Structure probing data (2A3) for a 207-nucleotide construct.
The reactions ran in a buffer of 150 mM KOAc, 10 mM MgCl2 and 150 mM bicine (pH 8.5), at 24 C.

[RMDB]
RNA sequence: GGGAACGACUCGAGUAGAGUCGAAAAUUGCACUCCGAGUUUCAGCAUGGAUGGACUCGUUAAAGAAGUCUAUGCAACCUUUAGAUGCAGACGAUUAUUCGUAUGCAAUGGCUGCCUAAUUAGCAAAAGUUAAUUAACCAGCCAUCGCUCUUCAGCGGGAAGGUCUUAAGUUCGCUUAAGACCUUCCAAAAGAAACAACAACAACAAC
Reactivity to 2A3 in 0.01 (KOAc 150mM, MgCl2 10mM, bicine 150mM(pH8.5), 24C), signal-to-noise 2, nucleotides 027 to 156: u120u100g080c090a070c090u040c000c000g020a000g040u000u000u050c030a020g050c000a000u000g000g020a060u010g060g000a020c000u000c030g100u120u000a020a030a010g030a010a000g000u000c000u030a010u020g000c000a030a180c000c020u050u140u240a080g010a130u130g000c020a010g000a030c000g050a050u030u170a050u300u070c000g000u020a060u030g020c000a010a040u000g000g000c000u000g000c000c000u030a010a010u000u000a010g000c000a050a110a300a140g010u010u050a000a010u000u000a000a090c030c000a020g000c000c000a020u030c040g000c020u030c010u150u200c070a020g020c060g070